The record gives the reactivity of an RNA of 177 nucleotides to 2A3 and DMS.
[RMDB]
RNA sequence: GGGAACGACUCGAGUAGAGUCGAAAAGAUAUGGACGCUAAGACAUGAUGAACGUCGGAAACGACGUGAACAUCAACAGCUUAGGCGUCCUAAGUCAAAAGCUCGUCUACGUUCGCGUAGACGAGCACCUUAUAGUUACGUUCGCGUAACUAUAAGGAAAAGAAACAACAACAACAAC
Reactivity to 2A3 in 0.01 (KOAc 150mM, MgCl2 10mM, bicine 150mM(pH8.5), 24C), signal-to-noise 9, nucleotides 027 to 126: g010a000u020a010u040g000g000a000c000g000c020u020a010a000g030a110c140a300u300g000a010u000g020a070a000c000g010u000c000g010g000a020a010a010c000g000a000c010g020u020g040a090a080c000a000u010c030a140a190c100a110g000c000u030u020a110g210g190c000g000u000c000c000u000a010a000g000u000c010a050a070a080a090g010c000u010c010g000u000c000u000a010c000g030u040u110c300g000c000g190u000a000g000a000c000g000a000g000c000a000
Reactivity to DMS in 0.01 (KOAc 150mM, MgCl2 10mM, bicine 150mM(pH8.5), 24C), signal-to-noise 4, nucleotides 027 to 126: g010a020u000a100u010g000g010a010c000g010c000u000a010a020g000a040c050a300u010g010a010u000g010a110a020c000g010u000c000g010g000a020a020a050c000g010a010c000g000u010g000a120a130c010a030u000c000a100a130c280a170g000c000u000u000a020g030g010c000g020u000c000c000u000a010a070g000u000c020a110a090a140a140g010c000u000c010g010u000c000u000a010c000g010u000u020c270g030c010g010u000a010g000a000c000g010a000g020c010a000

The DMS profile rests on 27,094 reads. DMS adducts were read by reverse transcription with MarathonRT. For 2A3 the reverse transcriptase was SuperScript II with manganese.